[RMDB]
RNA sequence: GGGAACGACUCGAGUAGAGUCGAAAAAUAGGCUUAUCAAGAGAGGUGGAGGGACUGGCCCGAUGAAACCCGGCAGCCACAAAUGGUGCCAAUUCCUGCAGCGGAAACGUUGAAAGAUGAGCCGAUGUAAGGCACUACUUCGGUAGUGCCAAAAGAAACAACAACAACAAC
Reactivity to 2A3 in 0.01 (KOAc 150mM, MgCl2 10mM, bicine 150mM(pH8.5), 24C), signal-to-noise 3, nucleotides 027 to 129: a000u120a020g010g000c010u020u000a000u050c090a140a010g070a010g030a060g060g030u010g000g030a040g000g000g000a020c040u030g020g000c010c000c000g140a200u000g040a010a000a030c000c000c000g000g000c030a060g100c000c020a040c060a030a120a100u170g010g000u010g010c040c000a000a020u040u010c020c000u080g020c000a000g010c010g030g020a030a020a010c040g000u030u050g040a070a020a020g010a010u010g000a000g000c010c010g000a040u080g080u090a060a040
Reactivity to DMS in 0.01 (KOAc 150mM, MgCl2 10mM, bicine 150mM(pH8.5), 24C), signal-to-noise 2, nucleotides 027 to 129: a000u030a070g030g000c000u010u010a000u010c010a170a060g000a200g030a100g000g060u060g000g000a000g010g000g040a120c090u030g020g070c000c000c050g040a060u070g000a030a030a070c050c020c020g050g050c020a060g000c080c070a030c200a040a060a090u000g000g000u030g030c020c030a030a100u080u000c000c010u050g030c030a070g000c020g020g060a030a050a050c000g020u010u020g010a050a100a120g000a060u020g000a000g030c030c010g030a060u130g030u040a020a030